[RMDB]
RNA sequence: GGGAACGACUCGAGUAGAGUCGAAAAGCAUUCGCCUUCGGGCGAAUGCAAACAAAACCGGGCAAAAAUUAAAGGUACUACUUCGGAAAAAGUACCUAAACAAAAGAGCUUGGUUCGCCAAGCUCAACUCAUCUAAUUACUUCGGUAAUUAGAUGAGAAAAGAAACAACAACAACAAC
Reactivity to DMS in 0.01 (KOAc 150mM, MgCl2 10mM, bicine 150mM(pH8.5), 24C), signal-to-noise 1, nucleotides 027 to 126: g000c000a000u000u000c010g070c000c030u020u010c240g060g020g050c010g060a000a000u000g020c020a010a020a120c060a100a090a200a100c020c000g000g030g030c120a020a090a060a130a070u010u050a050a050a040g030g000u000a020c010u010a120c090u000u010c240g000g010a100a080a110a040a010g000u000a010c000c000u000a040a090a110c080a070a050a100a170g000a050g000c010u000u000g000g000u000u030c150g040c010c000a000a020g010c000u010c010a040a080
Reactivity to 2A3 in 0.01 (KOAc 150mM, MgCl2 10mM, bicine 150mM(pH8.5), 24C), signal-to-noise 3, nucleotides 027 to 126: g000c000a000u000u010c010g010c030c010u040u070c190g040g000g010c000g000a010a000u010g000c010a000a000a000c020a010a100a000a030c000c020g020g090g000c060a120a110a160a040a180u170u170a300a300a080g000g000u010a000c000u000a010c000u060u230c130g070g030a120a160a010a000a000g010u000a000c000c000u070a030a070a010c040a010a100a030a060g000a000g000c000u000u000g010g000u020u040c080g000c020c010a000a000g000c000u010c000a000a000